[RMDB]
RNA sequence: GGGAACGACUCGAGUAGAGUCGAAAAGAGUAAAUAGAGGAGUCAGGGUUCGCACCAGCUCCGCGAACCUAGGGUAACACUGACUGUGGAGCGGAAGAGAGAGCAGACGAAGAUACGUCUGCAUAGACCCAUCCUCCACCUUCGGGUGGAGGAUGGGAAAAGAAACAACAACAACAAC
Reactivity to 2A3 in 0.01 (KOAc 150mM, MgCl2 10mM, bicine 150mM(pH8.5), 24C), signal-to-noise 1, nucleotides 027 to 126: g110a000g080u140a000a030a100u160a140g060a090g040g080a020g000u040c080a000g040g000g000u000u000c030g000c000a020c030c030a020g000c020u030c080c000g000c000g000a000a000c000c020u000a120g150g200g010u150a090a000c090a040c120u000g030a020c020u030g020u070g000g000a070g000c140g020g000a210a000g070a000g010a010g000a000g090c000a030g000a000c000g040a030a020g130a090u140a190c020g000u010c070u000g000c000a000u060a000g010a000
Reactivity to DMS in 0.01 (KOAc 150mM, MgCl2 10mM, bicine 150mM(pH8.5), 24C), signal-to-noise 1, nucleotides 027 to 126: g000a010g010u020a000a070a170u000a020g000a190g060g000a010g050u000c000a250g060g000g000u000u000c020g000c000a070c000c080a280g030c160u000c170c080g030c000g000a000a000c010c000u000a100g070g000g000u060a170a050c180a220c020u000g000a070c130u050g000u030g000g000a110g180c000g000g010a300a210g000a030g000a060g000a000g000c000a000g020a000c010g000a230a150g030a130u020a010c020g130u000c000u000g020c000a010u030a060g000a150

The record gives the reactivity of an RNA of 177 nucleotides to 2A3 and DMS. The RNA was probed in 150 mM KOAc, 10 mM MgCl2 and 150 mM bicine (pH 8.5) at 24 C. For 2A3 the reverse transcriptase was SuperScript II with manganese. For DMS, 850 sequencing reads were counted. For 2A3, 623 sequencing reads were counted.